[RMDB]
RNA sequence: GGGAACGACUCGAGUAGAGUCGAAAAGUUUAUUAAGUAUUAUCUCACACAAUCACAAGGUCCCACAAUAGGCUGUCUGCAGGCUGAGGAGCAAGGAUAGCCAGUCUGAGUUCCAAAGCUGAGUCUGAUGUUCUAGGGCAGGAAGCAUCCAGCAUGGUGAAAUGCUGGAAUUCGUUCCAGCAUUUCAAAAAGAAACAACAACAACAAC
Reactivity to 2A3 in 0.01 (KOAc 150mM, MgCl2 10mM, bicine 150mM(pH8.5), 24C), signal-to-noise 2, nucleotides 027 to 156: g020u060u140u170a180u110u130a220a010g030u040a130u190u040a080u030c050u030c050a050c010a030c030a090a150u170c030a020c020a140a040g060g030u040c010c020c000a040c000a020a120u120a070g060g000c020u020g000u110c010u020g030c040a060g050g000c000u010g010a020g010g010a020g020c030a030a010g000g010a000u050a080g100c020c010a010g030u000c010u010g020a020g000u050u000c020c000a000a050a040g020c000u020g000a000g010u000c050u060g040a070u080g030u090u030c000u060a040g010g010g000c000a010g000g030a010a010g000c010a010u040c020c000a010g030c040a080u130g120g000
Reactivity to DMS in 0.01 (KOAc 150mM, MgCl2 10mM, bicine 150mM(pH8.5), 24C), signal-to-noise 2, nucleotides 027 to 156: g010u010u010u000a070u010u000a030a110g010u010a110u000u000a110u000c010u000c060a070c040a040c060a110a090u000c030a110c030a070a120g000g030u000c000c000c040a100c150a060a110u010a100g070g010c030u010g070u010c020u010g000c040a250g010g010c010u010g010a300g000g010a070g000c050a060a300g020g010a030u000a090g010c110c140a120g030u010c000u020g010a300g000u010u010c020c020a040a170a090g010c020u000g000a070g010u000c010u000g010a120u000g000u000u000c030u000a090g040g010g030c010a020g000g010a030a030g040c050a070u000c010c030a050g010c030a060u000g040g000
Annotation
The data come from the RNA Mapping Database (RMDB), library OK3TST. An RNA of 207 nucleotides, treated with 2A3 and DMS and read out base by base. The 2A3 profile rests on 1,962 reads.